[RMDB]
RNA sequence: GGGAACGACUCGAGUAGAGUCGAAAACUGUAGACACCUUCAGCCUUGGGUCCAAGGGACACCCCCUGAGAUCAGGCACGCUCAAGAAGCUGACAAAGCCCUACACUUUAUGCCACCCAUGAGCUGGUCGUACAGCUCAUUUCGAUGAGCUGUACGAAAAAGAAACAACAACAACAAC
Reactivity to DMS in 0.01 (KOAc 150mM, MgCl2 10mM, bicine 150mM(pH8.5), 24C), signal-to-noise 5, nucleotides 027 to 126: c060u010g010u000a070g010a160c090a080c070c040u000u010c030a070g010c000c010u000u000g010g000g010u000c070c060a140a070g000g010g000a130c210a170c140c070c010c020c000u010g000a140g020a070u000c070a080g000g000c150a050c170g000c040u000c050a040a080g000a050a110g020c030u010g020a070c300a060a070a120g000c070c020c020u000a050c100a070c070u000u000u000a050u010g000c070c070a150c030c030c010a070u010g020a100g020c050u000g000g010
Reactivity to 2A3 in 0.01 (KOAc 150mM, MgCl2 10mM, bicine 150mM(pH8.5), 24C), signal-to-noise 3, nucleotides 027 to 126: c010u020g020u090a020g010a090c010a070c070c030u080u040c020a030g000c010c010u040u040g030g010g030u010c030c030a070a060g030g010g060a050c000a100c030c030c000c000c010u020g080a080g020a180u090c040a020g000g050c020a010c050g030c010u020c020a050a120g070a060a040g050c020u030g020a050c060a020a100a020g000c020c000c010u030a030c060a020c040u040u130u060a060u200g020c010c030a050c010c000c010a050u040g020a020g040c060u060g000g060
An RNA of 177 nucleotides, treated with DMS and 2A3 and read out base by base. For DMS the reverse transcriptase was MarathonRT. The 2A3 profile rests on 4,072 reads. Conditions: 150 mM KOAc, 10 mM MgCl2 and 150 mM bicine (pH 8.5), 24 C.